[RMDB]
RNA sequence: GGGAACGACUCGAGUAGAGUCGAAAAUUAAGGAUUCGUCCUUAAGCAAUGGGGUCUGCUCGUUUGACGGGAGCAACAGCGUACUGAAGCCUCCACGGUACGACAUGCUCGCCCGAGAGCAGACGGAGGCACCCUAACAUCAACGUUCGCGUUGAAAUCUCUAAGGCAAUUUCGAUUGCCUUAGAGAAAAAGAAACAACAACAACAAC
Reactivity to 2A3 in 0.01 (KOAc 150mM, MgCl2 10mM, bicine 150mM(pH8.5), 24C), signal-to-noise 2, nucleotides 027 to 156: u020u000a000a000g010g040a000u050u080c240g060u000c060c000u000u000a040a000g070c070a070a200u250g100g060g050g000u000c000u000g030c010u020c010g110u110u130u290g110a050c000g000g010g040a120g060c020a080a070c020a080g160c030g000u000a000c000u010g060a190a050g000c020c000u020c000c010a020c020g010g000u000a010c020g050a040c000a090u110g010c070u130c220g270c020c050c000g120a110g000a000g000c000a000g010a000c020g000g000a000g000g000c020a040c030c030c000u040a080a060c040a140u120c000a020a010c010g070u110u100c270g040c030g140u000u040g000a060a050a020
Reactivity to DMS in 0.01 (KOAc 150mM, MgCl2 10mM, bicine 150mM(pH8.5), 24C), signal-to-noise 1, nucleotides 027 to 156: u000u000a000a000g010g000a020u000u010c270g030u000c000c000u000u000a020a020g020c170a090a090u000g000g220g000g000u000c000u020g040c000u020c040g040u010u010u020g000a170c050g080g010g050a200g010c000a040a040c000a000g010c000g020u000a010c000u020g010a030a140g000c020c010u040c060c030a300c050g000g010u000a050c000g040a130c110a120u000g000c010u000c100g050c010c000c010g000a120g000a040g030c000a020g010a010c120g010g000a000g090g080c010a120c020c040c020u000a050a170c050a140u000c010a020a000c040g020u010u020c200g010c140g000u000u000g000a040a130a150